Chemical mapping of a 207-nucleotide RNA with 2A3 and DMS.
Source: RMDB library M2RFPK, as collected in RNAgym.
2A3 adducts were read by reverse transcription with SuperScript II with manganese.
For DMS, 1,990 sequencing reads were counted.
Conditions: 150 mM KOAc, 10 mM MgCl2 and 150 mM bicine (pH 8.5), 24 C.

RNA sequence: GGGAACGACUCGAGUAGAGUCGAAAAACGGUCAUAUAGGUAUGACCGAAUGAGCAUAACAGGGCCACCCCAAAGCGUUCACAUUGUGGCCCCUGUCAGAUUCUGGUAAAUCUGCGAGUUCUGCUAAAUUAGGUAACUCUCUUCGGAGAGUUACCAAGUCUGAUUAUAGCUUCGGCUAUAAUCAGACAAAAGAAACAACAACAACAAC
Reactivity to 2A3 in 0.01 (KOAc 150mM, MgCl2 10mM, bicine 150mM(pH8.5), 24C), signal-to-noise 3, nucleotides 027 to 156: a000c010g000g020u010c040a020u070a010u100a110g220g120u070a060u060g000a000c010c010g000a010a100u100g010a000g000c010a040u010a120a010c020a050g000g010g000c000c000a010c000c030c010c080a090a110a040g140c070g090u150u120c080a080c050a250u160u120g000u010g000g000c000c020c000c020u060g070u080c010a010g010a050u050u020c010u230g100g000u040a040a030a020u020c000u010g010c030g030a080g050u080u010c050u060g030c020u060a050a130a250u190u140a040g000g000u000a000a000c000u000c010u000c000u040u020c050g030g000a000g000a020g030u000u000a000c000c000a010a000
Reactivity to DMS in 0.01 (KOAc 150mM, MgCl2 10mM, bicine 150mM(pH8.5), 24C), signal-to-noise 1, nucleotides 027 to 156: a110c040g000g010u000c000a000u000a090u010a130g030g010u010a010u000g000a020c000c000g000a020a030u000g030a160g010c040a100u000a050a050c090a080g030g030g000c010c040a010c030c000c010c030a030a140a170g040c080g000u000u000c070a130c110a220u000u000g010u000g000g010c040c000c020c000u000g040u010c010a050g010a000u010u000c040u040g030g010u010a060a040a030u000c020u020g000c030g010a140g000u000u010c090u010g030c030u000a050a070a120u010u000a100g030g020u000a020a010c000u000c000u000c000u030u000c300g040g000a020g010a050g010u000u010a000c000c000a040a090